RNA sequence: GGGAACGACUCGAGUAGAGUCGAAAAUGUAGAUUCACAAAUUCCACAAUGUCAAAUACUGCAAUCACGGACAUCCUAUACCCCGAGUGUCAUCUUGAUAGUCCUAUUGUCACAGGGAAAUUGUACAUGGCAUGAUCAUGUUCGCAUGAUCAUGCCAAAAAGAAACAACAACAACAAC
Reactivity to DMS in 0.01 (KOAc 150mM, MgCl2 10mM, bicine 150mM(pH8.5), 24C), signal-to-noise 2, nucleotides 027 to 126: u030g010u000a120g000a100u000u000c170a050c050a010a090a130u000u010c010c040a020c090a110a040u010g000u000c010a020a020a060u000a090c060u000g020c070a080a050u000c070a080c200g000g000a070c030a040u000c000c010u000a060u020a220c100c030c040c030g030a070g010u000g000u000c060a040u030c030u000u010g000a040u030a110g010u000c030c010u010a070u010u020g000u000c130a090c040a250g020g010g020a020a040a020u020u000g040u000a080c100a090
Reactivity to 2A3 in 0.01 (KOAc 150mM, MgCl2 10mM, bicine 150mM(pH8.5), 24C), signal-to-noise 1, nucleotides 027 to 126: u130g080u130a010g040a230u100u090c040a020c050a030a010a090u150u000c030c000a060c130a170a070u020g050u070c010a000a070a040u080a210c000u120g030c000a050a070u020c010a020c020g020g000a000c000a010u030c080c000u200a180u220a240c000c020c020c000g010a010g020u020g000u020c000a000u000c010u000u100g020a020u030a040g010u000c040c060u080a140u050u050g170u110c000a010c020a060g040g000g200a020a020a020u120u080g070u010a030c060a200